[RMDB]
RNA sequence: GGGAACGACUCGAGUAGAGUCGAAAACAGGGCUUUUUUUGAUCGAUAAAUCGACUUCCAGUCCGUCCAUGUUGAUCAAGCGUGAAGCAUCCGAACCUUCGAUGGGCGAGGCAUGCAUUCGCCUGGAUGCGCAGCGUUCGAAUGCGACCACCGGCGCACAUGUUUACCUAUUCGUAGGUAAACAUGUAAAAGAAACAACAACAACAAC
Reactivity to 2A3 in 0.01 (KOAc 150mM, MgCl2 10mM, bicine 150mM(pH8.5), 24C), signal-to-noise 6, nucleotides 027 to 156: c050a040g020g020g030c070u110u070u050u040u050u050u140g080a120u070c030g020a030u100a160a270a170u090c030g010a020c000u130u020c090c040a020g020u020c040c020g010u030c050c040a090u070g010u030u040g080a100u070c060a040a060g010c010g030u040g060a040a000g020c000a010u010c020c010g010a040a050c010c000u060u070c040g050a100u180g000g000g000c000g010a010g050g010c090a090u230g040c040a080u050u020c010g000c000c000u050g090g100a090u200g080c010g000c040a010g020c020g070u000u010c010g000a020a010u020g010c000g040a090c040c050a070c040c040g090g010c030g010c020
Reactivity to DMS in 0.01 (KOAc 150mM, MgCl2 10mM, bicine 150mM(pH8.5), 24C), signal-to-noise 3, nucleotides 027 to 156: c050a100g020g020g020c020u000u000u000u000u000u000u000g010a040u000c040g030a100u000a040a080a100u000c060g010a040c020u000u010c110c090a100g000u000c030c060g010u000c030c040a140u020g000u000u020g010a080u000c040a070a060g000c070g030u000g000a130a290g000c020a030u020c010c010g010a070a030c030c040u000u010c050g000a190u000g000g030g020c020g020a140g010g010c120a120u000g020c070a140u000u000c030g020c000c000u010g000g010a070u000g030c040g000c050a100g000c110g000u000u000c020g000a050a060u000g020c010g010a120c030c030a070c030c020g010g000c050g020c100
An RNA of 207 nucleotides, treated with 2A3 and DMS and read out base by base. For DMS the reverse transcriptase was MarathonRT. For 2A3, 4,935 sequencing reads were counted. The RNA was probed in 150 mM KOAc, 10 mM MgCl2 and 150 mM bicine (pH 8.5) at 24 C. For 2A3 the reverse transcriptase was SuperScript II with manganese.